[RMDB]
RNA sequence: GGGAACGACUCGAGUAGAGUCGAAAAGAUAUGGAGGGUUGUUUGAAUCGUUUGGGACAUGCUUGGGUGGUCGGAAACGACCACAGAGCAACAGCCCACUGACGAUUCAAACAACCCUCCUAAGUCACUACUAGAGCUUCUUCGGAAGCUCUAGUAGAAAAGAAACAACAACAACAAC
Reactivity to DMS in 0.01 (KOAc 150mM, MgCl2 10mM, bicine 150mM(pH8.5), 24C), signal-to-noise 2, nucleotides 027 to 126: g010a010u000a300u010g000g040a010g000g020g010u000u000g010u010u000u000g010a030a010u000c010g010u000u010u020g010g000g000a060c100a240u000g000c010u000u050g010g030g010u000g040g000u010c000g000g030a130a120a300c000g020a000c000c000a000c000a280g010a010g020c000a020a060c280a160g020c020c010c010a050c300u010g060a010c010g000a020u000u000c000a000a020a040c000a000a010c000c000c000u000c000c000u000a000a060g000u000c030a220